Chemical mapping of a 207-nucleotide RNA with DMS and 2A3. The 2A3 profile rests on 5,275 reads. Source: RMDB library OK3TST, as collected in RNAgym. Values are in units of 0.01, from 0 to 300, in steps of 10. The reactions ran in a buffer of 150 mM KOAc, 10 mM MgCl2 and 150 mM bicine (pH 8.5), at 24 C.
[RMDB]
RNA sequence: GGGAACGACUCGAGUAGAGUCGAAAAAUUUGAGUAGUUUAAGUUACAGAUAUACCGUUAGUCAUUGAGGGUCUUAUUACUAGUGGUCAGUAAUUUCCACAUUUUGUUAAAUGUACAGAUAACAAGGUUGUGCAAUCUCAACCCCUUGACCCAUGUAGAUUACGUCAUUAUUCGUAAUGACGUAAUCAAAAGAAACAACAACAACAAC
Reactivity to DMS in 0.01 (KOAc 150mM, MgCl2 10mM, bicine 150mM(pH8.5), 24C), signal-to-noise 4, nucleotides 027 to 156: a140u010u000u000g000a070g000u000a090g040u000u000u010a060a120g000u000u000a190c030a130g010a200u000a140u000a040c000c020g020u000u000a060g020u000c080a090u000u000g020a080g010g000g010u010c020u000u000a060u000u000a040c030u000a050g010u000g030g010u000c080a140g010u010a030a080u000u000u010c050c010a030c010a060u000u000u000u000g010u000u000a000a070a080u010g020u000a210c120a110g000a240u000a030a030c020a050a020g010g020u000u000g020u000g010c120a120a080u010c040u000c030a030a070c050c000c010c100u000u000g010a110c010c010c020a070u000g010u010a110
Reactivity to 2A3 in 0.01 (KOAc 150mM, MgCl2 10mM, bicine 150mM(pH8.5), 24C), signal-to-noise 6, nucleotides 027 to 156: a010u070u070u070g010a030g010u070a030g020u100u160u170a100a010g010u030u020a020c020a030g120a100u080a020u070a200c010c010g010u000u010a010g020u020c030a020u010u070g090a240g000g010g010u000c010u050u060a040u020u020a010c020u020a010g020u010g050g010u020c040a020g010u020a010a030u040u030u050c030c010a010c010a030u030u050u020u030g020u010u060a040a100a100u100g050u110a070c060a090g120a130u030a040a010c010a000a040g030g010u070u060g020u070g010c020a080a100u050c010u000c020a020a050c000c000c010c020u030u070g010a010c000c010c030a020u140g050u080a030